[RMDB]
RNA sequence: GGGAACGACUCGAGUAGAGUCGAAAAUGGGCAGAAGUACUGCUCCAGUUGUCACUGGACCUCCCCAGAGUAAACUGCCUUUUGAUGACCAGGGCGAAUUGAGUGAAAUCGUCAUGGACAGAUACGGACAAUAAAUCGCCUUCGGGCGAUUUAUUGUAAAAGAAACAACAACAACAAC
Reactivity to DMS in 0.01 (KOAc 150mM, MgCl2 10mM, bicine 150mM(pH8.5), 24C), signal-to-noise 1, nucleotides 027 to 126: u050g000g000g010c020a030g000a080a160g050u000a010c080u000g000c030u000c010c000a040g030u000u030g060u020c140a120c000u070g020g000a020c080c220u000c010c000c040c000a130g030a060g000u000a020a150a110c010u000g000c000c000u000u040u000u060g030a190u010g000a150c020c000a020g000g000g010c020g000a020a150u030u020g000a160g000u030g000a180a050a050u020c010g000u010c000a040u000g030g000a050c050a060g000a140u030a120c200g000g010
Reactivity to 2A3 in 0.01 (KOAc 150mM, MgCl2 10mM, bicine 150mM(pH8.5), 24C), signal-to-noise 2, nucleotides 027 to 126: u130g000g010g000c000a010g010a160a010g140u040a040c020u010g000c000u000c000c000a020g020u070u030g130u150c040a000c000u000g030g010a080c070c030u120c030c040c000c000a000g030a000g020u030a000a000a100c010u040g030c010c000u000u100u160u090g160a090u030g030a000c030c000a050g000g000g000c000g040a150a170u300u170g170a180g040u190g050a130a040a030u000c040g020u000c000a020u000g000g000a010c020a060g030a000u110a000c060g060g050